RNA sequence: GGGAACGACUCGAGUAGAGUCGAAAAUUCAUGGAGACCCAUCCCACACUGGAUGCCUUACACUGUGACAUCGGCAAUGCCACUGAGUUUAACAAAAUAUUCCAAGAUGAGAUUGGGGAGGUGUCCCGCUCGGUACUAUAUUCGUAUAGUACCGAGCAAAAGAAACAACAACAACAAC
Reactivity to DMS in 0.01 (KOAc 150mM, MgCl2 10mM, bicine 150mM(pH8.5), 24C), signal-to-noise 3, nucleotides 027 to 126: u030u040c160a140u030g030g020a060g010a170c000c000c030a080u000c010c030c010a050c200a120c120u000g010g020a060u010g000c060c040u000u010a040c100a100c070u000g010u010g000a040c040a060u020c140g000g010c160a050a050u020g000c050c000a050c040u020g000a090g010u020u010u000a080a080c270a060a060a080a090u060a060u020u000c020c010a060a030g010a100u000g000a060g000a100u040u010g040g000g000g000a030g020g010u010g000u000c000c050c140
Reactivity to 2A3 in 0.01 (KOAc 150mM, MgCl2 10mM, bicine 150mM(pH8.5), 24C), signal-to-noise 7, nucleotides 027 to 126: u080u070c030a030u110g060g010a050g030a050c020c000c000a040u030c020c000c010a060c010a020c020u040g030g000a030u040g020c000c010u060u090a060c080a030c040u040g030u050g070a010c010a050u040c020g060g010c070a060a040u100g010c030c010a040c030u040g050a040g100u050u080u100a070a060c080a020a070a070a030u190a110u100u010c020c000a040a030g050a190u110g030a040g050a140u080u110g010g000g010g000a020g000g010u040g010u020c000c000c010
The record gives the reactivity of an RNA of 177 nucleotides to DMS and 2A3. DMS adducts were read by reverse transcription with MarathonRT. It was measured as part of the RMDB library OK1LIB. The RNA was probed in 150 mM KOAc, 10 mM MgCl2 and 150 mM bicine (pH 8.5) at 24 C.